[RMDB]
RNA sequence: GGGAACGACUCGAGUAGAGUCGAAAAAGACAUACUUUUAGGCCUCGGGGGAUAAAUUGAAUUUUUAUUUGGAAUUUUAGAACCGUAGAGGGUGAUAGUCCCGUAGAUAUAUUCUCUUUUUGAGGUUUUUAGAGGUACUAUUCGUAGUACCUCUAAAAAAAGAAACAACAACAACAAC
Reactivity to 2A3 in 0.01 (KOAc 150mM, MgCl2 10mM, bicine 150mM(pH8.5), 24C), signal-to-noise 2, nucleotides 027 to 126: a000g070a060c030a130u240a040c000u000u080u050u110a100g030g030c000c000u000c000g010g000g000g030g000a000u010a040a100a050u060u010g020a010a000u010u150u010u050u100a140u140u020u110g050g020a040a040u100u020u140u140a100g010a020a000c000c000g000u000a010g010a040g090g040g010u030g020a010u030a020g030u000c000c010c000g010u010a000g010a000u020a000u000a000u090u030c000u010c000u070u020u080u150u270g030a020g000g000u000u000
Reactivity to DMS in 0.01 (KOAc 150mM, MgCl2 10mM, bicine 150mM(pH8.5), 24C), signal-to-noise 2, nucleotides 027 to 126: a020g000a180c140a110u030a070c020u000u010u000u020a150g000g000c000c000u000c020g020g050g020g020g020a060u000a060a050a000u020u000g000a020a030u020u040u050u020u040a050u050u030u000g000g040a290a090u030u000u020u060a040g010a130a060c030c000g030u010a040g000a160g000g000g000u000g010a170u000a010g020u000c010c000c010g000u040a270g010a030u050a060u000a030u000u010c000u000c010u000u030u010u030u010g000a050g000g010u000u000